Notes
This 207-nucleotide RNA was probed chemically with 2A3. For 2A3 the reverse transcriptase was SuperScript II with manganese. For 2A3, 632 sequencing reads were counted.

RNA sequence: GGGAACGACUCGAGUAGAGUCGAAAACAAGUUCGUGCUUGCGACUUACACGUAGGGCGAGGGGUGGGCGAAUGUUGCCAUGAGACCGUAACUUUCGUAGUCAUUGAUAAAGGGGCAGGUCUCGCUCAAAAGACGUUGGUCUUCGGACCAACGUCAAGUAACUGUGCAUCUUCGGAUGCACAGUUACAAAAGAAACAACAACAACAAC
Reactivity to 2A3 in 0.01 (KOAc 150mM, MgCl2 10mM, bicine 150mM(pH8.5), 24C), signal-to-noise 2, nucleotides 027 to 156: c010a010a010g050u110u080c020g020u110g110c050u110u090g030c040g100a070c020u170u280a070c040a000c020g020u060a110g070g010g050c120g050a210g020g030g000g110u300g010g010g000c050g090a050a030u050g050u070u060g070c120c130a130u130g010a010g000a000c000c000g000u000a010a030c000u060u030u050c020g060u010a100g040u050c120a210u080u210g000a000u130a100a060a000g030g000g050g000c030a020g000g000u050c000u000c000g000c010u050c020a070a070a060a050g040a010c000g000u020u000g000g020u000c000u000u010c150g100g010a010c010c000a000a000c000g000u000c000a000a000